[RMDB]
RNA sequence: GGGAACGACUCGAGUAGAGUCGAAAAUUUUAUUAUGUGAUGAAGGAGUGAUUGAUAUUGGUAUCAUGCGAAGAUGUAAUCAUCCAACAUGUAAUACAUUGAUAAGUAGAGACGAAACAUAUUGUGAUAAGCACAAAACAUAUACAAACAAAGCAUAAAAUCACAUGGAAUUCGUUCCAUGUGAUUUAAAAGAAACAACAACAACAAC
Reactivity to 2A3 in 0.01 (KOAc 150mM, MgCl2 10mM, bicine 150mM(pH8.5), 24C), signal-to-noise 3, nucleotides 027 to 156: u020u050u010u040a040u040u040a050u080g010u010g050a080u040g010a090a050g040g020a030g070u060g020a070u070u050g040a040u030a030u140u100g070g000u090a080u150c020a010u060g030c070g070a040a050g010a090u030g010u100a110a040u180c020a010u000c040c020a030a010c010a020u060g020u090a080a010u050a080c020a040u060u130g060a030u100a200a050g060u090a020g030a000g030a030c080g030a020a080a020c040a010u120a080u100u050g000u010g020a050u060a070a020g030c010a010c010a060a060a030a000c030a030u130a000u070a080c050a020a080a000c020a030a090a030g010c050a020u100a120
Reactivity to DMS in 0.01 (KOAc 150mM, MgCl2 10mM, bicine 150mM(pH8.5), 24C), signal-to-noise 3, nucleotides 027 to 156: u000u010u000u010a110u020u000a100u020g030u010g000a090u000g000a130a130g010g010a090g040u010g020a110u000u000g010a080u000a080u000u020g020g010u000a130u010c030a020u000g010c060g010a170a130g010a060u000g020u010a130a160u010c040a040u010c010c020a080a040c010a030u000g030u010a050a060u000a070c040a060u000u000g040a160u000a050a070g010u000a120g010a130g000a090c070g010a110a050a070c040a060u010a080u000u000g010u000g020a070u000a030a080g000c050a050c030a040a040a070a060c050a070u010a100u000a110c060a040a050a110c080a050a040a080g010c050a070u000a040